[RMDB]
RNA sequence: GGGAACGACUCGAGUAGAGUCGAAAAUAAAAAUAGAAAGAUUUGAACUUCCUAGAAAUGAAGCUUUAGAGCUUAUGAAAGAACAAGGAGAAGACUAUAAGGUAGAACUUAUUUCUGAUUUACCUGAACUAUAUGACGCGUUCGCGCGUCAUAUAGUAAAAGAAACAACAACAACAAC
Reactivity to 2A3 in 0.01 (KOAc 150mM, MgCl2 10mM, bicine 150mM(pH8.5), 24C), signal-to-noise 2, nucleotides 027 to 126: u050a000a000a000a000a070u100a050g260a030a080a010g040a100u230u140u300g050a060a030c000u000u000c030c010u000a000g090a080a130a010u200g040a050a050g000c090u070u230u290a150g110a000g040c000u030u030a030u230g080a180a000a060g000a120a060c130a150a020g020g000a030g000a110a050g000a030c010u040a070u070a230a050g000g000u010a000g130a130a010c000u160u030a040u190u180u000c070u130g040a050u030u000u080a040c010c010u010g000a010
Reactivity to DMS in 0.01 (KOAc 150mM, MgCl2 10mM, bicine 150mM(pH8.5), 24C), signal-to-noise 2, nucleotides 027 to 126: u030a050a070a130a010a050u010a070g040a190a050a100g060a130u030u010u000g000a250a120c050u000u000c010c020u030a130g010a070a040a070u030g030a010a050g000c020u010u000u030a070g010a060g000c000u000u000a090u000g000a110a100a070g000a030a070c050a070a040g020g000a150g000a150a000g010a040c070u020a100u000a010a010g000g000u010a160g020a070a250c020u000u000a020u000u000u000c020u010g000a160u000u000u000a110c000c000u000g020a170
Description: An RNA of 177 nucleotides, treated with 2A3 and DMS and read out base by base. Values cover nucleotides 27 to 126. The RNA was probed in 150 mM KOAc, 10 mM MgCl2 and 150 mM bicine (pH 8.5) at 24 C.